[RMDB]
RNA sequence: GGGAACGACUCGAGUAGAGUCGAAAACGAAACUUCCAACCGAUGUGUCGCCAGAUUCCAAAUUCGCUCGCUAUGGCGAACUACUUUGCGGUUGCGGUUGCAAAUCAACACAACAAUUCUGGAUUUAGCAGCUAUGGUACCGCGGCUAGUAUGCGCGCUCCGUUCACUGAUUCGUCAGUGAACGGAGAAAAGAAACAACAACAACAAC
Reactivity to 2A3 in 0.01 (KOAc 150mM, MgCl2 10mM, bicine 150mM(pH8.5), 24C), signal-to-noise 2, nucleotides 027 to 156: c090g070a070a020a020c030u090u060c040c020a110a080c000c040g060a060u110g040u010g060u100c010g000c040c000a040g090a110u160u080c050c020a060a080a140u170u080c100g000c060u000c020g080c060u070a040u110g000g000c000g000a020a000c000u010a010c000u150u130u280g000c020g010g000u070u070g070c010g000g020u030u010g040c020a020a020a020u040c030a000a160c070a050c030a170a170c030a090a220u300u040c110u260g050g000a000u020u020u020a050g010c000a000g010c000u070a090u200g130g030u040a020c020c000g010c010g010g030c000u010a040g050u020a110u150g050c090g000c000g000